[RMDB]
RNA sequence: GGGAACGACUCGAGUAGAGUCGAAAAGCUUUCUUUCUUCCACUCACCCACUUCUCGAGAAUAUCUUCUCUUCCAUCGCGCUUCUUCUUCGAUUCGGAUCGGCUCAUCUCGACAAGAGGCGGCGGUCACACCUAUUCGUUCGCGAAUAGGAAAAGAAACAACAACAACAAC
Reactivity to DMS in 0.01 (KOAc 150mM, MgCl2 10mM, bicine 150mM(pH8.5), 24C), signal-to-noise 9, nucleotides 027 to 129: g000c120u040u040u040c000u030u050u020c000u040u020c030c000a070c030u020c030a150c060c040c020a100c040u000u050c050u010c000g040a110g030a100a090u000a060u030c070u050u010c000u010c010u040u060c040c040a080u000c050g020c070g000c070u020u010c030u010u010c050u020u020c030g060a150u050u050c040g000g060a080u000c000g020g000c040u010c030a050u000c020u020c040g010a080c270a000a050g000a090g000g050c060g040g040c080g000g060u030c080a050c140a120
Reactivity to 2A3 in 0.01 (KOAc 150mM, MgCl2 10mM, bicine 150mM(pH8.5), 24C), signal-to-noise 9, nucleotides 027 to 129: g010c030u050u080u020c000u020u070u010c010u070u010c020c010a040c020u030c020a080c010c020c010a030c030u100u030c020u030c040g050a050g030a090a080u100a100u150c080u070u000c020u010c000u060u040c040c010a060u050c020g000c010g000c050u030u000c010u040u000c010u030u040c040g120a130u060u060c030g050g050a040u020c010g030g000c000u010c020a050u010c010u000c020g060a050c040a070a020g020a020g040g020c000g030g010c010g030g000u020c020a030c000a000